[RMDB]
RNA sequence: GGGAACGACUCGAGUAGAGUCGAAAAGCUGGCCCGAGUCGGAGCAUGCGGAGUGGGUGGGUGCCUACCAGUCCACGGAAGAGGCGCUGGAGGCCGUGCGGGAGGCCACGAACGACGAGACCUACGGUAGUAUAGGAUCCUUCGGGAUCCUAUACUAAAAAGAAACAACAACAACAAC
Reactivity to DMS in 0.01 (KOAc 150mM, MgCl2 10mM, bicine 150mM(pH8.5), 24C), signal-to-noise 3, nucleotides 027 to 126: g000c110u000g030g020c020c000c040g000a090g000u010c030g000g000a100g010c080a080u000g040c070g010g020a150g040u010g000g010g010u000g000g000g010u000g000c040c020u000a090c030c010a040g000u000c030c040a110c050g020g030a150a090g020a110g020g020c210g020c000u000g010g030a090g000g020c010c120g010u000g010c090g010g000g000a130g010g010c050c010a040c040g000a070a070c090g020a040c040g010a140g010a100c050c000u000a060c100g010g010
Reactivity to 2A3 in 0.01 (KOAc 150mM, MgCl2 10mM, bicine 150mM(pH8.5), 24C), signal-to-noise 2, nucleotides 027 to 126: g010c040u000g020g010c020c020c010g010a040g040u080c080g040g000a040g040c130a080u130g020c080g040g040a230g060u210g010g020g090u230g010g010g060u090g020c010c030u150a300c010c010a000g010u020c020c010a010c080g030g010a120a030g040a050g020g010c070g000c040u020g020g010a040g020g040c000c040g050u060g040c030g020g030g040a030g000g000c000c000a030c020g040a080a030c010g040a020c010g040a020g050a080c000c000u060a020c050g110g040